Structure probing data (DMS and 2A3) for a 177-nucleotide construct. Reactivities are given for positions 27 through 126. It was measured as part of the RMDB library TTRDEL. The DMS profile rests on 1,608 reads. Conditions: 150 mM KOAc, 10 mM MgCl2 and 150 mM bicine (pH 8.5), 24 C. High DMS reactivity at an A or C suggests that its Watson-Crick edge is free.
RNA sequence: GGGAACGACUCGAGUAGAGUCGAAAAGAUAUGGAUCCUGUGGACAUGUCCCUCGGAAACGAGAGGACAACAGCCACUGGAUCCUAAGUCAAAGACUUUUGAGUCACUUCGGUGACUCAAAAGUCAACCGCUUAAUACUGUUCGCAGUAUUAAGCGGAAAAGAAACAACAACAACAAC
Reactivity to DMS in 0.01 (KOAc 150mM, MgCl2 10mM, bicine 150mM(pH8.5), 24C), signal-to-noise 2, nucleotides 027 to 126: g020a030u020a230u000g010g010a010u000c000c000u000g000u010g010g010a060c160a220u010g000u000c000c000c010u000c010g010g000a060a070a100c010g010a010g000a140g020g010a010c010a000a070c300a140g010c000c000a000c010u000g000g010a010u000c000c000u000a000a070g000u000c030a150a130a100g010a000c000u000u000u000u000g000a010g010u000c000a020c000u000u030c190g010g000u010g000a020c000u000c010a010a010a010a000g010u000c000a020a050
Reactivity to 2A3 in 0.01 (KOAc 150mM, MgCl2 10mM, bicine 150mM(pH8.5), 24C), signal-to-noise 1, nucleotides 027 to 126: g040a020u060a030u120g010g010a010u010c010c000u040g010u020g000g040a150c080a210u050g010u020c000c000c000u000c000g010g000a050a050a010c000g010a010g030a070g040g040a000c010a000a040c010a020g020c000c000a010c000u000g020g000a000u020c000c000u000a030a010g040u010c040a080a010a180g010a010c000u000u080u000u010g000a000g000u010c000a000c010u080u060c290g140g000u000g000a000c010u010c030a010a010a000a000g000u000c000a000a000